[RMDB]
RNA sequence: GGGAACGACUCGAGUAGAGUCGAAAACUGGCAGUGCGAAGGCCGCUGGCAGGCCGACGACCAGAUGGACAUCUGGCAGUGCGCCGACGAAGUGGAACUCGACGCGAUGAGCGCACGCGAUGAGGAGGUGGACGAACAUGGCGACGACGAAACGUGAAGAUAACGUUGUAUUCGUACAACGUUAUCUAAAAGAAACAACAACAACAAC
Reactivity to 2A3 in 0.01 (KOAc 150mM, MgCl2 10mM, bicine 150mM(pH8.5), 24C), signal-to-noise 4, nucleotides 027 to 156: c030u030g050g000c030a040g000u050g060c020g100a130a030g070g020c030c010g010c070u040g050g060c050a030g030g000c000c010g020a030c030g050a070c010c020a000g010a070u070g050g070a040c030a120u020c040u040g040g040c030a020g010u020g030c040g000c030c020g010a030c050g030a100a030g020u050g050g060a060a030c040u020c070g040a050c030g020c040g090a130u140g060a040g050c020g000c010a010c020g060c020g040a080u100g000a040g030g020a050g020g030u030g010g040a020c040g020a030a020c050a030u080g040g000c040g040a040c040g020a010c010g050a100a080a000c050g070u150g060a030
Reactivity to DMS in 0.01 (KOAc 150mM, MgCl2 10mM, bicine 150mM(pH8.5), 24C), signal-to-noise 2, nucleotides 027 to 156: c050u010g010g030c020a050g050u000g010c030g000a150a160g030g020c010c020g000c000u010g010g030c020a100g000g000c020c010g040a090c040g010a090c020c010a010g000a000u010g050g030a120c140a230u000c020u000g030g010c040a050g030u000g000c000g030c020c000g000a070c010g010a090a090g010u010g010g030a070a130c060u000c030g000a070c040g020c030g010a160u020g000a250g000c010g030c030a100c050g030c050g010a070u010g000a080g010g000a080g000g020u010g010g010a120c060g030a050a070c010a090u010g010g000c030g030a100c030g030a070c100g010a050a080a040c050g040u010g000a190